[RMDB]
RNA sequence: GGGAACGACUCGAGUAGAGUCGAAAACAAGUUGGCUUCGGCCAACUUGAAAAGAAUGGUAGACAGAGACCGCUAAACUCAGAUAACCAAAAAUAGCGGAAAAAAGAUCAGUGUUCGCACUGAUCAACGCAGCUAUAUAGUUCGCUAUAUAGCUGCGAAAAGAAACAACAACAACAAC
Reactivity to DMS in 0.01 (KOAc 150mM, MgCl2 10mM, bicine 150mM(pH8.5), 24C), signal-to-noise 2, nucleotides 027 to 126: c020a010a020g040u000u000g000g040c010u000u010c170g040g010c020c000a000a030c000u000u000g020a110a070a060a170g010a050a080u000g000g010u020a060g020a120c160a110g000a080g000a060c020c010g000c010u000a040a090a120c030u000c010a150g010a120u000a050a210c060c010a020a010a030a050a120u000a000g030c000g010g010a010a050a030a070a090a030g020a020u000c020a000g010u000g000u000u010c300g030c010a010c000u010g000a010u010c000a080a090
Reactivity to 2A3 in 0.01 (KOAc 150mM, MgCl2 10mM, bicine 150mM(pH8.5), 24C), signal-to-noise 2, nucleotides 027 to 126: c010a010a010g000u020u000g010g000c010u030u100c260g060g000c020c000a000a010c000u000u000g000a000a000a000a000g090a040a080u150g020g040u110a020g020a120c090a040g090a030g020a090c000c020g000c020u040a150a070a000c050u020c050a000g010a210u130a080a090c020c000a000a000a000a060a060u030a010g000c000g030g000a070a000a000a000a080a030g000a000u000c000a000g010u000g060u070u060c130g000c060a010c000u010g000a000u010c000a000a020